[RMDB]
RNA sequence: GGGAACGACUCGAGUAGAGUCGAAAACGCCUUGGGACCGGGAUCUCCGGUUGCCCGAGCGCUCAUAACAUGCGCGCAGGCGCUGGCGCUGAACGAAUUCUUUGACACGCAGCUGCGGGGGAUCACCCCGUCCCUAAUUGUUCGCAAUUAGGGACGGAAAAGAAACAACAACAACAAC
Reactivity to DMS in 0.01 (KOAc 150mM, MgCl2 10mM, bicine 150mM(pH8.5), 24C), signal-to-noise 2, nucleotides 027 to 126: c070g010c040c010u000u010g020g010g000a110c010c030g030g030g020a150u010c120u000c000c000g000g000u010u020g020c000c000c010g020a080g000c070g020c000u000c110a130u000a110a070c160a300u000g020c050g020c020g010c110a100g010g000c010g000c040u010g000g030c060g030c030u000g000a070a090c100g000a070a120u000u000c040u000u000u000g000a100c120a090c100g000c080a020g000c060u020g010c060g000g010g010g010g010a100u010c080a150c060c050
Reactivity to 2A3 in 0.01 (KOAc 150mM, MgCl2 10mM, bicine 150mM(pH8.5), 24C), signal-to-noise 1, nucleotides 027 to 126: c000g010c030c000u020u010g040g000g000a010c030c000g230g050g180a300u100c160u010c080c000g000g100u000u170g080c000c000c000g020a020g000c040g000c010u010c030a110u110a080a050c010a070u090g000c020g000c020g000c070a030g110g000c010g000c050u030g030g020c010g020c040u020g010a050a060c040g010a090a110u200u000c040u020u190u060g030a030c020a010c080g080c020a040g050c030u100g010c000g020g000g000g050g020a040u060c010a070c020c020
An RNA of 177 nucleotides, treated with DMS and 2A3 and read out base by base. Values are in units of 0.01, from 0 to 300, in steps of 10.